[RMDB]
Structure probing data (2A3 and DMS) for a 177-nucleotide construct. For DMS the reverse transcriptase was MarathonRT. Source: RMDB library RFMREP, as collected in RNAgym. The RNA was probed in 150 mM KOAc, 10 mM MgCl2 and 150 mM bicine (pH 8.5) at 24 C.
RNA sequence: GGGAACGACUCGAGUAGAGUCGAAAACAUUGGUCCGACGGACAGAAAUCAUGUAUAAGGCUUACAGUUCGGAUAAGACUGCUGAACAAGUUGAAGUCCAAUAGCUAACAGAGGACUGGUAGUAGACGCAUAGAUUAUUGUUCGCAAUAAUCUAUGCAAAAGAAACAACAACAACAAC
Reactivity to 2A3 in 0.01 (KOAc 150mM, MgCl2 10mM, bicine 150mM(pH8.5), 24C), signal-to-noise 5, nucleotides 027 to 126: c030a030u050u090g030g000u000c000c000g020a030c020g020g020a020c040a090g140a020a150a040u150c080a100u090g090u080a060u030a150a090g020g000c000u010u020a050c030a060g000u030u040c020g020g010a030u040a070a030g060a040c070u090g000c030u040g070a030a020c030a100a100g050u090u070g110a040a010g020u000c000c000a030a040u040a080g050c020u030a050a030c010a020g020a030g000g000a010c000u010g020g000u030a100g030u010a020g010a080c080
Reactivity to DMS in 0.01 (KOAc 150mM, MgCl2 10mM, bicine 150mM(pH8.5), 24C), signal-to-noise 7, nucleotides 027 to 126: c060a090u000u000g020g010u000c000c020g020a260c140g000g020a080c120a070g000a110a090a120u010c100a060u010g010u010a060u010a120a170g000g000c030u000u000a100c080a090g020u000u010c050g000g010a080u000a070a240g010a080c080u000g000c030u010g010a080a060c110a080a070g010u000u000g000a080a120g000u000c000c030a070a080u010a040g010c080u000a060a170c060a040g000a300g000g000a080c010u000g000g010u000a060g020u000a090g000a110c190